[RMDB]
RNA sequence: GGGAACGACUCGAGUAGAGUCGAAAAUGUACAGGGUGGCAGAUGGCGUGCCAUAAAUCUAUUAGUGGGAUACCACGCUUGUGGACCUUAUGCCCACACAGCCAUCCUCUAGUAAGUUUGUAAAAUGGCACUGCAUAGCAUUCGUGCUAUGCAGUGCAAAAGAAACAACAACAACAAC
Reactivity to 2A3 in 0.01 (KOAc 150mM, MgCl2 10mM, bicine 150mM(pH8.5), 24C), signal-to-noise 2, nucleotides 027 to 126: u190g000u000a050c020a020g000g010g030u010g000g000c000a000g000a110u080g060g010c080g010u050g020c000c000a000u020a010a050a000u090c140u150a130u020u100a020g010u010g060g000g040a010u060a160c050c020a000c050g000c000u000u110g000u000g010g010a010c000c040u080u060a140u230g030c000c000c000a000c000a000c000a000g000c000c000a040u040c000c010u040c010u000a130g000u010a240a040g000u000u030u230g170u120a110a000a080a090u040g070
Reactivity to DMS in 0.01 (KOAc 150mM, MgCl2 10mM, bicine 150mM(pH8.5), 24C), signal-to-noise 2, nucleotides 027 to 126: u010g080u010a050c170a000g060g010g070u000g000g020c030a230g030a140u000g000g010c000g000u000g020c010c000a060u040a070a090a130u020c290u060a120u000u020a130g010u000g000g040g000a080u020a270c300c000a020c050g020c090u000u050g020u000g030g000a080c000c220u030u000a130u120g010c080c010c000a020c000a130c160a270g010c000c020a000u000c000c000u000c080u100a070g010u000a040a060g000u000u000u000g000u000a020a020a110a180u000g000